RNA sequence: GGGAACGACUCGAGUAGAGUCGAAAAUUGGGCCAUCGCUUUCGAUCCGCAUCACCGGGUCGCUUCCGGUGUGUUUCAGCACGUUCUCCACGAAUACGUUGACGACGACCAACGCGACUGGAAUAAGCUAUGUAUCUAGUUUCGACUAGAUACAUAGAAAAGAAACAACAACAACAAC
Reactivity to DMS in 0.01 (KOAc 150mM, MgCl2 10mM, bicine 150mM(pH8.5), 24C), signal-to-noise 9, nucleotides 027 to 126: u010u010g020g010g020c020c020a030u000c040g010c080u000u000u000c030g000a050u000c040c060g020c150a100u010c100a080c110c010g010g000g010u000c120g010c120u000u000c050c020g020g010u000g010u000g010u000u000u000c070a080g020c080a120c060g010u000u000c040u000c040c050a080c100g000a100a080u010a100c060g010u000u000g010a170c080g010a070c100g010a080c130c030a020a050c060g010c030g000a130c110u000g010g010a070a090u010a080a110g010
Reactivity to 2A3 in 0.01 (KOAc 150mM, MgCl2 10mM, bicine 150mM(pH8.5), 24C), signal-to-noise 8, nucleotides 027 to 126: u070u040g020g030g000c020c010a040u040c030g020c040u040u070u060c020g050a060u020c020c020g020c060a110u100c020a040c040c020g020g000g030u050c030g030c060u070u010c010c010g020g010u030g010u020g000u010u070u080c030a030g020c040a010c070g020u030u020c040u010c030c020a060c040g070a100a060u180a100c050g020u020u030g050a030c080g030a030c040g030a050c030c020a040a020c030g010c030g070a060c030u040g000g060a090a100u140a160a010g040
Notes:
Chemical mapping of a 177-nucleotide RNA with DMS and 2A3. For 2A3 the reverse transcriptase was SuperScript II with manganese. The DMS profile rests on 28,610 reads. Conditions: 150 mM KOAc, 10 mM MgCl2 and 150 mM bicine (pH 8.5), 24 C. It was measured as part of the RMDB library OK2TRN. The 2A3 profile rests on 23,209 reads.